[RMDB]
Source: RMDB library OK3TST, as collected in RNAgym. Chemical mapping of a 207-nucleotide RNA with 2A3 and DMS. The RNA was probed in 150 mM KOAc, 10 mM MgCl2 and 150 mM bicine (pH 8.5) at 24 C. For 2A3 the reverse transcriptase was SuperScript II with manganese. DMS adducts were read by reverse transcription with MarathonRT.
RNA sequence: GGGAACGACUCGAGUAGAGUCGAAAACACACUUGCCAGCCUCCACAAUCGCAGCUGAGGCGGAGGAACCCUAAGGGCUCAUUGAGAUCAUGGAUUUGCCCUUCUAUGCAUUGAUGGAGCACCUGCUGCCCACAGCGUCUGUAUUUGGUGCUGGGAACAUGAUCGAUUUAUUCGUAAAUCGAUCAUGAAAAGAAACAACAACAACAAC
Reactivity to 2A3 in 0.01 (KOAc 150mM, MgCl2 10mM, bicine 150mM(pH8.5), 24C), signal-to-noise 9, nucleotides 027 to 156: c070a000c010a030c070u060u140g080c000c000a020g000c010c030u160c040c000a070c090a070a060u080c080g030c070a070g020c030u030g010a020g020g010c030g010g000a050g020g040a040a020c030c010c010u030a030a060g030g010g000c010u020c030a100u050u150g090a090g030a100u140c040a030u090g080g020a070u070u060u270g040c010c020c000u010u020c050u070a100u080g040c060a070u050u110g040a070u090g080g050a020g030c040a120c030c010u110g060c010u040g000c040c010c010a290c010a030g000c020g080u070c060u120g150u100a090u040u070u060g010g000u020g010c000u000g000g010g010a020a010
Reactivity to DMS in 0.01 (KOAc 150mM, MgCl2 10mM, bicine 150mM(pH8.5), 24C), signal-to-noise 3, nucleotides 027 to 156: c060a100c070a110c170u010u000g010c030c030a150g020c030c020u000c010c030a070c100a090a080u010c080g030c060a130g020c090u000g030a090g000g020c020g010g010a070g020g010a100a110c050c070c030u010a090a070g010g020g010c000u010c020a100u000u010g000a240g010a090u000c020a070u000g010g020a110u000u000u000g020c030c050c080u000u010c010u000a040u000g010c100a180u000u000g010a160u000g020g000a040g010c010a050c030c030u000g000c030u000g010c010c000c020a060c010a050g010c030g020u010c020u000g020u000a080u010u000u000g000g010u010g010c000u010g010g000g010a130a190